[RMDB]
RNA sequence: GGGAACGACUCGAGUAGAGUCGAAAAGAGCUCGCACCUGACACUGCAGCACAGCAGGCUUCCUGAACUUGCAAAGCGUGAGAAGAUUGGCCAUCCGUUCACUACAAAGCGAUGAUAGAACUGGAAGCUACCGAGAUACUUUCGAGUAUCUCGGUAGAAAAGAAACAACAACAACAAC
Reactivity to DMS in 0.01 (KOAc 150mM, MgCl2 10mM, bicine 150mM(pH8.5), 24C), signal-to-noise 4, nucleotides 027 to 126: g010a180g030c020u010c090g010c070a110c040c020u000g030a120c070a080c080u020g020c050a080g030c070a040c100a080g010c050a070g010g000c060u000u000c020c000u000g010a080a110c070u010u000g010c050a070a070a130g010c100g000u000g000a110g010a090a080g000a100u000u010g010g010c020c050a090u000c040c050g000u000u010c020a060c050u000a080c130a030a050a090g010c060g000a080u010g010a110u020a070g000a070a060c060u010g000g010a080a070g010
Reactivity to 2A3 in 0.01 (KOAc 150mM, MgCl2 10mM, bicine 150mM(pH8.5), 24C), signal-to-noise 3, nucleotides 027 to 126: g040a020g030c020u020c090g010c020a020c040c010u010g040a020c010a010c090u050g000c000a030g010c040a010c040a070g060c010a000g000g040c010u060u050c020c010u050g050a110a080c020u050u100g050c050a140a050a030g040c040g040u050g020a030g030a090a040g030a070u050u090g040g000c000c010a030u020c030c010g030u070u050c050a030c070u210a080c050a070a130a020g030c030g040a020u050g020a030u040a100g070a080a020c040u060g040g040a030a010g000

Structure probing data (DMS and 2A3) for a 177-nucleotide construct.